RNA sequence: GGGAACGACUCGAGUAGAGUCGAAAAUUUUUAUCAUUACUAGCCUUGCAGCUGUAACUUAUGGCCGUUCACACCUAACUCUACCUGUUGGCUCAACAUGUACACUACAAGGACCCCAACAAGGCUAUGUCACUUGGUGGAGAAUAUAUGAUAAUGGCCGAAAAUACUAAUUCGUUAGUAUUUUCGGAAAAGAAACAACAACAACAAC
Reactivity to 2A3 in 0.01 (KOAc 150mM, MgCl2 10mM, bicine 150mM(pH8.5), 24C), signal-to-noise 4, nucleotides 027 to 156: u080u070u010u010u010a060u030c010a010u010u140a070c050u060a050g020c000c000u030u020g040c040a030g010c070u060g040u100a110a160c030u100u100a070u190g030g000c030c010g110u180u150c070a050c010a030c060c020u040a100a080c030u060c030u130a110c020c050u040g010u100u070g090g000c030u030c150a030a060c010a040u080g000u030a020c030a000c020u040a020c010a060a000g040g000a060c000c000c030c000a010a010c010a010a030g020g000c030u130a150u230g070u130c030a030c130u020u030g000g000u010g040g030a090g040a070a010u140a020u040a010u060g000a010u030a090a030u060g070g000
Reactivity to DMS in 0.01 (KOAc 150mM, MgCl2 10mM, bicine 150mM(pH8.5), 24C), signal-to-noise 2, nucleotides 027 to 156: u000u000u000u000u000a070u020c020a070u000u010a120c070u000a120g020c020c010u000u000g080c030a060g020c090u020g030u010a050a050c070u010u010a080u000g010g030c020c020g000u010u010c060a060c070a090c050c020u000a040a090c020u020c050u010a070c000c020u000g020u000u010g010g000c050u000c060a080a070c070a090u000g020u000a030c050a110c020u000a040c020a050a090g000g020a300c030c010c000c010a020a030c030a030a030g020g000c000u000a090u000g020u000c080a060c050u000u000g010g030u000g020g010a020g000a080a090u000a090u000a050u000g000a040u000a010a040u000g000g030
This 207-nucleotide RNA was probed chemically with 2A3 and DMS. Reactivities are given for positions 27 through 156. The DMS profile rests on 3,829 reads. The data come from the RNA Mapping Database (RMDB), library OK3TST. Conditions: 150 mM KOAc, 10 mM MgCl2 and 150 mM bicine (pH 8.5), 24 C. For DMS the reverse transcriptase was MarathonRT.